[RMDB]
RNA sequence: GGGAACGACUCGAGUAGAGUCGAAAAGAUAUGGAUCCUGUAGACAUGAUCCUGUAUCGGAAACGAUACGCGAUCAACAGCUACUGGAUCCUAAGUCAAAGAGCACACUGGUUCGCCAGUGUGCUCACGCUCAUGUAUUCUUCGGAAUACAUGAGCGAAAAGAAACAACAACAACAAC
Reactivity to 2A3 in 0.01 (KOAc 150mM, MgCl2 10mM, bicine 150mM(pH8.5), 24C), signal-to-noise 3, nucleotides 027 to 126: g030a000u000a010u040g000g010a000u000c010c000u000g020u000a000g030a030c240a300u300g000a020u030c000c000u040g000u000a000u010c010g000g000a020a000a000c000g010a000u000a000c000g000c100g000a000u020c080a240a080c130a140g030c010u000a010c000u000g020g000a000u000c000c000u000a000a000g000u000c050a100a210a080g010a010g000c010a000c000a000c010u010g030g090u120u260c300g100c130c000a000g000u000g000u010g000c000u000c010a000
Reactivity to DMS in 0.01 (KOAc 150mM, MgCl2 10mM, bicine 150mM(pH8.5), 24C), signal-to-noise 2, nucleotides 027 to 126: g000a020u000a000u000g020g010a010u000c000c000u000g000u000a000g010a000c030a220u020g010a000u010c010c030u000g010u000a010u000c010g010g000a010a000a020c010g010a000u010a000c000g030c300g000a010u000c010a100a070c290a140g000c000u000a000c000u010g010g000a000u000c000c000u000a000a040g000u000c000a130a120a170g030a020g000c000a020c000a010c000u000g000g000u000u020c290g000c000c000a050g010u000g000u000g020c000u000c010a020